Source: RMDB library OK1LIB, as collected in RNAgym. This 177-nucleotide RNA was probed chemically with 2A3 and DMS. For 2A3 the reverse transcriptase was SuperScript II with manganese. Conditions: 150 mM KOAc, 10 mM MgCl2 and 150 mM bicine (pH 8.5), 24 C.
RNA sequence: GGGAACGACUCGAGUAGAGUCGAAAACGUCUUUUUCAAUGUAAAGUAGCCCCUGAUUGGAAGGGGAGUCGUUACCUGGACUGUCUGUAUGACUUUGGGAUUCACUGUGCCUGGCGUACGAUAUUCACGUACAAAGACCAUUCGUGGUCUUUGUACGAAAAGAAACAACAACAACAAC
Reactivity to 2A3 in 0.01 (KOAc 150mM, MgCl2 10mM, bicine 150mM(pH8.5), 24C), signal-to-noise 5, nucleotides 027 to 126: c060g100u080c030u090u140u000u040u070c030a080a100u130g140u210a190a040a110g060u070a030g060c010c000c000c010u030g050a090u050u110g050g050a040a020g010g000g000g000a000g010u010c010g020u020u020a290c000c000u020g020g010a020c030u030g010u020c040u030g050u030a050u110g100a160c000u070u060u100g010g010g000a020u100u030c030a020c080u050g030u090g070c000c010u030g040g010c050g010u060a030c020g020a030u020a090u130u120c050a030
Reactivity to DMS in 0.01 (KOAc 150mM, MgCl2 10mM, bicine 150mM(pH8.5), 24C), signal-to-noise 2, nucleotides 027 to 126: c120g000u040c020u000u020u020u010u010c030a070a070u000g000u050a040a040a100g030u010a140g010c000c000c000c040u000g000a040u000u010g010g000a060a030g000g000g000g000a000g020u000c010g000u000u000a040c000c000u020g010g010a070c050u000g000u000c050u020g000u010a010u010g000a060c050u000u000u030g010g030g000a060u020u000c100a090c080u000g010u000g000c070c000u000g000g000c070g030u000a030c050g000a070u000a050u030u010c070a210